RNA sequence: GGGAACGACUCGAGUAGAGUCGAAAACGCACCGGCUCGGCGACCAGCGGGCCAAACGGCUGCUGUUCACCGGCGAUUGCAUCACCGGCGCGCAGGCCGCCGAGUGGGGCCUGGCGGUCGAGGCGCCCUGUGCGUCAGGGUUCGCCCUGACGCACAGAAAAGAAACAACAACAACAAC
Reactivity to 2A3 in 0.01 (KOAc 150mM, MgCl2 10mM, bicine 150mM(pH8.5), 24C), signal-to-noise 1, nucleotides 027 to 126: c040g000c020a020c010c020g090g000c070u140c110g040g000c010g040a030c020c000a020g000c050g070g050g040c030c000a080a170a020c130g000g000c010u040g000c000u000g000u000u050c010a020c050c000g040g010c010g050a080u000u300g020c020a030u060c030a040c070c070g010g000c040g000c010g000c050a020g010g020c000c000g000c020c000g020a010g030u090g010g050g050g000c000c050u040g020g000c000g030g000u030c000g020a050g000g040c050g000c000c030
Reactivity to DMS in 0.01 (KOAc 150mM, MgCl2 10mM, bicine 150mM(pH8.5), 24C), signal-to-noise 2, nucleotides 027 to 126: c200g000c020a060c060c070g010g010c030u020c000g030g020c040g020a020c000c010a050g000c000g000g000g010c010c010a030a050a090c300g000g020c000u020g010c010u010g010u000u000c030a060c010c010g020g000c020g010a070u010u020g040c080a300u000c100a080c100c030g020g010c010g020c020g030c010a300g000g030c020c020g020c000c000g010a060g010u010g010g020g000g020c300c050u000g020g010c000g010g010u000c000g000a280g000g000c020g000c090c000